This 177-nucleotide RNA was probed chemically with 2A3 and DMS. It was measured as part of the RMDB library OK2TST. The reactions ran in a buffer of 150 mM KOAc, 10 mM MgCl2 and 150 mM bicine (pH 8.5), at 24 C. Values are in units of 0.01, from 0 to 300, in steps of 10. The 2A3 profile rests on 652 reads.
RNA sequence: GGGAACGACUCGAGUAGAGUCGAAAAAUUCGGGUCUUUCAUAUAAAGAACCUGGUGCAGAUGGCAUUGAGGGUGAAGCAGUUGAUCUUGCAAUUUGUGCGAUGGAUAUGUUUGCAUUACAAUAUCCUACACUCAUCCAGUUCGCUGGAUGAGUGUAAAAAGAAACAACAACAACAAC
Reactivity to 2A3 in 0.01 (KOAc 150mM, MgCl2 10mM, bicine 150mM(pH8.5), 24C), signal-to-noise 1, nucleotides 027 to 126: a000u050u020c000g020g000g060u000c000u040u080u020c070a140u210a070u110a300a220a030g090a070a110c010c020u000g000g060u070g030c010a030g020a240u140g040g000c030a060u080u110g040a040g070g000g020u030g070a060a020g000c010a070g000u070u090g080a060u000c030u090u100g000c020a050a220u050u040u160g150u030g010c080g030a080u080g020g050a030u010a000u040g060u050u180u180g050c050a080u040u160a010c000a000a110u030a040u050c010c000
Reactivity to DMS in 0.01 (KOAc 150mM, MgCl2 10mM, bicine 150mM(pH8.5), 24C), signal-to-noise 2, nucleotides 027 to 126: a110u020u000c030g020g030g000u010c000u000u000u000c110a100u040a130u020a070a110a100g000a080a090c030c010u020g010g010u020g010c000a060g020a060u010g000g010c060a040u000u000g010a080g000g010g020u000g010a090a070g010c040a040g010u000u000g030a090u000c070u000u010g020c060a040a070u000u000u000g020u000g000c030g010a090u010g020g010a030u000a030u000g000u010u000u010g000c120a100u010u000a020c080a060a060u000a030u000c010c010